Structure probing data (2A3) for a 177-nucleotide construct. High 2A3 reactivity points to a flexible backbone, as in loops and unpaired stretches.
[RMDB]
RNA sequence: GGGAACGACUCGAGUAGAGUCGAAAAUAGUCGGUUUAUUAAACUCAGAUAACCGGCUACAAGAGUUAAGGUGCAUAAUCAAAUCCAGAUGAGCCUGUGGGUUGCACUGUUCCAAGACAUCGACCCCGUGACUAAGGCCAUUCGUGGCCUUAGUCACAAAAGAAACAACAACAACAAC
Reactivity to 2A3 in 0.01 (KOAc 150mM, MgCl2 10mM, bicine 150mM(pH8.5), 24C), signal-to-noise 1, nucleotides 027 to 126: u030a000g000u000c000g000g030u120u050u050a080u130u160a080a250a180c140u160c170a000g020a030u100a020a020c000c060g000g000c000u020a000c000a000a090g030a000g140u040u090a000a060g030g000u000g000c000a000u040a110a050u170c070a030a020a000u020c000c000a000g000a020u000g010a020g080c000c000u040g030u210g010g000g040u010u090g000c030a030c090u030g000u000u000c030c030a110a090g020a000c000a000u200c080g080a040c000c000c000c000